[RMDB]
The record gives the reactivity of an RNA of 170 nucleotides to DMS and 2A3. Reactivities are given for positions 27 through 129. The RNA was probed in 150 mM KOAc, 10 mM MgCl2 and 150 mM bicine (pH 8.5) at 24 C. As a SHAPE reagent, 2A3 marks flexible, mostly unpaired nucleotides at the ribose 2'-OH.
RNA sequence: GGGAACGACUCGAGUAGAGUCGAAAAAGGAGUAUCCAAGCAAAGAAGGGGAAGGAUCUCGAGGAAGACAUCUCCCAAGAAGAAGCGGGAACAAUCUCAAGAAGAGGAGGAUUCCCCGAGACGCUGAAUAGCAUGUCCUUCGGGACAUGCAAAAGAAACAACAACAACAAC
Reactivity to DMS in 0.01 (KOAc 150mM, MgCl2 10mM, bicine 150mM(pH8.5), 24C), signal-to-noise 2, nucleotides 027 to 129: a060g030g000a070g010u000a000u000c050c080a140a090g020c160a040a090a070g000a070a060g000g000g000g000a020a030g030g030a000u030c020u040c030g030a060g040g000a040a030g000a040c100a080u030c060u050c040c010c070a180a090g050a030a050g030a060a020g040c120g030g020g020a040a090c120a090a030u000c000u050c080a080a030g020a180a120g000a050g060g000a050g000g020a090u000u000c010c060c010c040g000a040g010a080c130g020c000u000g020a100a040u030a070
Reactivity to 2A3 in 0.01 (KOAc 150mM, MgCl2 10mM, bicine 150mM(pH8.5), 24C), signal-to-noise 3, nucleotides 027 to 129: a000g050g010a000g020u040a040u030c050c020a000a020g040c020a010a060a060g050a020a030g000g020g010g030a000a040g020g000a030u000c030u000c000g010a010g030g000a000a000g000a000c010a110u070c040u020c020c000c000a000a030g030a000a000g030a020a010g070c070g010g010g010a020a000c000a040a080u070c040u010c060a010a010g070a030a040g010a020g050g010a010g030g000a010u050u040c000c000c000c000g080a070g020a030c070g030c050u070g070a150a030u060a100